[RMDB]
RNA sequence: GGGAACGACUCGAGUAGAGUCGAAAAGGGCGCGCUGAUUGUGCGGCCGGGAAGCGGCCUGCGGCCCCGCCGGUGGUGAUUCACCUGAUCGCCGAGGCGGCCACGAUCAAUGGCACGGGCUCGGCGCCGUGCCCCCUAUGUUCGCAUAGGGGGCACGAAAAGAAACAACAACAACAAC
Reactivity to DMS in 0.01 (KOAc 150mM, MgCl2 10mM, bicine 150mM(pH8.5), 24C), signal-to-noise 2, nucleotides 027 to 126: g040g030g020c000g010c030g010c010u040g000a130u000u010g020u000g010c100g010g040c000c010g000g010g000a140a120g050c020g000g020c030c000u000g040c080g000g000c000c020c020c080g020c060c050g000g030u040g040g010u000g010a060u000u010c080a080c080c060u040g020a060u020c000g050c010c030g000a120g020g010c040g020g010c030c000a000c140g010a100u030c240a110a290u000g020g000c020a120c030g010g030g000c020u000c000g000g040c050g030c190
Reactivity to 2A3 in 0.01 (KOAc 150mM, MgCl2 10mM, bicine 150mM(pH8.5), 24C), signal-to-noise 5, nucleotides 027 to 126: g030g010g030c140g000c000g030c110u100g110a280u240u180g070u160g170c050g000g020c010c010g020g000g010a100a030g210c020g000g020c030c060u120g010c040g040g010c010c000c000c010g020c000c010g010g060u080g030g020u100g030a110u160u100c030a070c100c040u050g030a080u090c010g000c000c000g010a030g000g020c020g000g000c000c010a030c030g060a160u220c090a090a090u050g000g020c080a060c260g000g040g020c010u010c030g030g020c000g000c020